[RMDB]
RNA sequence: GGGAACGACUCGAGUAGAGUCGAAAAGGGGUCUAGAGAUGAUCUCUAGCGUGGGCUUUGAUCUUACUGAAGCCUCCACGGUAAGGGAGCCUCGGGUCAUCUGAUCUAGACGGAGGCACCCAAAACAAAACUCGAAGAUUCGUCUUCGAGUUUUGAACAACUAUCCCAUGUUCGCAUGGGAUAGUUGAAAAGAAACAACAACAACAAC
Reactivity to 2A3 in 0.01 (KOAc 150mM, MgCl2 10mM, bicine 150mM(pH8.5), 24C), signal-to-noise 3, nucleotides 027 to 156: g020g010g000g030u000c010u020a020g020a010g000a070u020g010a010u010c080u030c170u300a130g110c070g120u220g040g030g000c040u300u160u000g010a010u050c000u010u010a010c000u030g050a160a030g020c010c010u000c000c000a010c010g020g000u010a010a010g000g010g000a000g000c000c010u030c050g000g000g020u010c000a000u000c030u080g110a110u070c000u030a010g040a040c050g010g000a000g010g000c000a030c000c000c030a040a090a000a040c010a000a000a000a010c000u000c000g010a000a000g000a010u060u140c220g050u000c100u000u000c000g000a000g000u000u000u000u000g000a010a000
Reactivity to DMS in 0.01 (KOAc 150mM, MgCl2 10mM, bicine 150mM(pH8.5), 24C), signal-to-noise 1, nucleotides 027 to 156: g010g000g030g010u000c010u010a090g010a090g030a040u000g010a040u000c010u000c160u000a090g020c180g070u000g000g010g000c000u000u010u010g020a140u010c060u010u010a050c040u010g000a050a080g000c010c000u020c010c040a270c060g000g000u010a070a040g000g020g010a100g020c020c010u000c020g020g030g000u010c030a050u000c040u030g020a120u000c040u000a050g000a080c000g020g020a050g060g000c020a060c000c000c000a090a040a090a300c010a020a010a010a020c010u000c000g020a030a010g010a000u000u000c300g060u000c000u010u010c010g010a010g000u000u010u010u000g000a150a170